[RMDB]
RNA sequence: GGGAACGACUCGAGUAGAGUCGAAAACGGCAAAAAAGCAAGCUUGACCACCAAGGAUAAAAGAGAUCUUAUCCAAGGAUGCAAAAGAUAAUCUCACUUUUGACACCCACUGAUCUCGAACUUAAAGAAAACCGAGACUACUUCGGUAGUCUCGGAACAACAAUCACUAGUUCGCUAGUGAUUGUUGAAAAGAAACAACAACAACAAC
Reactivity to 2A3 in 0.01 (KOAc 150mM, MgCl2 10mM, bicine 150mM(pH8.5), 24C), signal-to-noise 6, nucleotides 027 to 156: c020g030g000c030a080a020a020a030a030a060g090c070a080a020g030c030u080u110g040a090c010c010a020c030c010a060a060g040g010a060u050a060a070a020a020g020a010g000a000u010c000u030u040a030u030c050c040a050a050g010g010a030u050g000c000a000a030a020a000g050a080u150a200a250u150c050u030c090a050c010u020u020u010u010g070a080c020a040c020c010c010a060c100u070g010a020u000c010u000c020g010a070a050c040u120u170a120a090a030g090a030a100a030a010c000c000g000a000g000a000c000u000a000c000u020u070c150g050g000u000a000g000u000c000u000c000g000g000a000a000
Reactivity to DMS in 0.01 (KOAc 150mM, MgCl2 10mM, bicine 150mM(pH8.5), 24C), signal-to-noise 2, nucleotides 027 to 156: c050g000g000c040a010a060a050a090a090a060g010c080a090a120g020c050u000u020g000a140c100c040a140c020c020a060a300g020g010a120u000a030a090a140a110g010a120g010a130u010c020u010u000a040u010c090c050a100a270g000g020a040u000g000c020a030a050a040a020g010a090u000a040a120u000c060u000c080a140c020u000u000u020u010g010a160c020a030c000c000c020a270c110u000g020a020u010c010u000c020g000a060a050c060u000u000a030a050a120g000a070a070a130a150c010c000g010a000g000a040c000u000a010c000u000u000c200g070g040u000a010g010u000c000u000c000g000g000a010a000
The record gives the reactivity of an RNA of 207 nucleotides to 2A3 and DMS. DMS adducts were read by reverse transcription with MarathonRT. The reactions ran in a buffer of 150 mM KOAc, 10 mM MgCl2 and 150 mM bicine (pH 8.5), at 24 C. The DMS profile rests on 3,921 reads. 2A3 adducts were read by reverse transcription with SuperScript II with manganese.